RNA sequence: GGGAACGACUCGAGUAGAGUCGAAAAGGCUUGGAGGCGGCCUGCCCGCAGUGCCCCAGUGGGAGGGAAGCAGUGUGCCAGCCGGGCCGUUGUGUGGAUGAUGGUGUGACUGGCUGAGGUCCUGCCCCGUAGCUCACUAUUUCGAUAGUGAGCUACGAAAAGAAACAACAACAACAAC
Reactivity to DMS in 0.01 (KOAc 150mM, MgCl2 10mM, bicine 150mM(pH8.5), 24C), signal-to-noise 3, nucleotides 027 to 126: g000g010c010u000u020g020g010a140g020g020c010g010g000c010c000u000g010c000c000c010g020c120a110g010u010g020c010c000c000c020a180g030u000g000g010g010a210g010g010g020a090a090g010c040a080g010u010g010u010g010c020c010a030g020c020c010g010g000g000c000c010g010u000u010g000u000g020u010g010g010a070u000g010a040u000g000g030u010g000u010g000a050c010u010g010g010c010u000g000a120g000g010u010c020c020u000g010c010c000c030
Reactivity to 2A3 in 0.01 (KOAc 150mM, MgCl2 10mM, bicine 150mM(pH8.5), 24C), signal-to-noise 2, nucleotides 027 to 126: g030g000c040u080u090g030g030a070g060g030c040g000g010c000c000u020g030c010c000c000g000c030a080g120u140g080c020c000c000c020a050g120u160g040g080g030a060g000g000g030a070a000g020c030a040g030u100g040u120g250c000c000a000g020c010c040g010g040g000c010c030g000u030u040g060u030g070u160g120g160a080u110g020a010u020g020g070u210g050u050g210a060c010u000g000g000c000u010g020a040g060g030u030c000c010u040g050c020c000c020

Structure probing data (DMS and 2A3) for a 177-nucleotide construct. The 2A3 profile rests on 2,942 reads. The reactions ran in a buffer of 150 mM KOAc, 10 mM MgCl2 and 150 mM bicine (pH 8.5), at 24 C. 2A3 adducts were read by reverse transcription with SuperScript II with manganese.